[RMDB]
RNA sequence: GGGAACGACUCGAGUAGAGUCGAAAAUGGAACCGCAGUUGGUUCCUCGGAACUAAACUCGUGGUUCCUGUGGUUCACACCUGACCUCCUGAGCAGAAAAGAAAAAAGAAGGCGGCUCGGAGGAGCGCUAACUACUGUGGUUCGCCACAGUAGUUAGAAAAGAAACAACAACAACAAC
Reactivity to DMS in 0.01 (KOAc 150mM, MgCl2 10mM, bicine 150mM(pH8.5), 24C), signal-to-noise 3, nucleotides 027 to 126: u010g000g010a010a000c000c000g000c020a030g000u010u000g000g000u000u000c000c020u000c270g010g000a010a010c000u010a030a040a030c000u010c150g030u010g000g000u000u000c010c000u000g000u000g020g020u000u000c110a090c110a120c050c040u020g000a140c010c020u000c000c020u020g020a040g030c030a090g010a110a080a080a110g020a000a040a090a130a140a100g010a120a110g020g010c100g010g000c010u010c000g010g010a050g000g010a060g010c110g000
Reactivity to 2A3 in 0.01 (KOAc 150mM, MgCl2 10mM, bicine 150mM(pH8.5), 24C), signal-to-noise 3, nucleotides 027 to 126: u040g020g000a000a000c000c010g000c000a010g010u010u020g030g000u000u000c010c020u010c090g030g010a000a000c000u130a300a010a010c020u120c150g000u020g000g030u000u000c000c000u000g030u040g030g060u150u130c060a040c050a040c120c000u040g110a130c000c000u000c000c020u140g010a000g000c050a010g210a100a140a100a040g260a040a240a050a080a050a000g110a070a020g150g110c130g030g000c020u010c010g010g000a010g020g010a020g000c100g000
Chemical mapping of a 177-nucleotide RNA with DMS and 2A3. Conditions: 150 mM KOAc, 10 mM MgCl2 and 150 mM bicine (pH 8.5), 24 C. For 2A3 the reverse transcriptase was SuperScript II with manganese. DMS adducts were read by reverse transcription with MarathonRT.